[RMDB]
RNA sequence: GGGAACGACUCGAGUAGAGUCGAAAAGAUAUGGAGGCGUCUUUUGACGGAAUACUGUAUCGGAAACGAUACAAUUCCGAUAAGACGCUCCUAAGUCAAAACCGCAGCAACUUCGGUUGCUGCGGAACAUUUCACAUGACUUCGGUCAUGUGAAAUGAAAAGAAACAACAACAACAAC
Reactivity to 2A3 in 0.01 (KOAc 150mM, MgCl2 10mM, bicine 150mM(pH8.5), 24C), signal-to-noise 1, nucleotides 027 to 126: g010a050u130a090u220g020g030a030g260g300c070g040u050c090u060u090u090u290g200a140c060g000g020a030a010u060a160c200u060g030u030a000u000c000g000g000a000a030a000c000g000a020u000a020c000a000a030u050u020c000c000g010a010u020a000a010g000a000c000g010c000u010c000c000u010a050a000g060u020c020a070a000a190a210c010c030g000c010a000g000c000a010a050c010u100u180c300g170g000u000u030g000c000u000g040c000g000g010a000a000
Reactivity to DMS in 0.01 (KOAc 150mM, MgCl2 10mM, bicine 150mM(pH8.5), 24C), signal-to-noise 1, nucleotides 027 to 126: g030a030u010a300u000g010g010a010g010g030c010g060u000c000u000u000u030u010g010a240c130g000g000a000a010u030a070c300u000g010u000a000u000c010g000g000a140a100a250c000g000a020u000a020c010a000a060u020u020c010c000g000a110u030a000a030g000a030c000g000c000u010c000c000u000a040a210g030u000c050a060a050a180a090c020c000g050c000a010g000c000a000a000c010u000u000c220g020g000u000u000g000c000u010g050c000g000g000a020a060